[RMDB]
RNA sequence: GGGAACGACUCGAGUAGAGUCGAAAAUGAAAGAGCGUCGCAAACACACAGACUAAGUCUCACACUGACUGACGCUAAACCGCUCUGUCAGUGUGGGUGAUAUCGGUAUUAAUGUGAGCGGAAAAAACGCUAAGUAGCUCUUCGGAGCUACUUAGCGAAAAGAAACAACAACAACAAC
Reactivity to DMS in 0.01 (KOAc 150mM, MgCl2 10mM, bicine 150mM(pH8.5), 24C), signal-to-noise 1, nucleotides 027 to 126: u000g000a120a200a080g000a220g000c000g050u000c010g010c000a040a050a170c250a000c040a010c080a040g000a020c010u000a110a120g020u020c000u000c000a000c000a010c020u000g020a030c020u000g000a070c050g000c010u000a040a160a170c030c020g000c020u000c000u000g000u000c000a000g070u020g040u000g010g000g020u000g030a160u000a060u000c010g060g010u000a020u000u000a080a200u000g020u000g000a150g000c010g000g000a020a040a030a030a040a070
Structure probing data (DMS) for a 177-nucleotide construct. The RNA was probed in 150 mM KOAc, 10 mM MgCl2 and 150 mM bicine (pH 8.5) at 24 C. Reactivities are given for positions 27 through 126. For DMS the reverse transcriptase was MarathonRT. The data come from the RNA Mapping Database (RMDB), library M2PK90. For DMS, 643 sequencing reads were counted.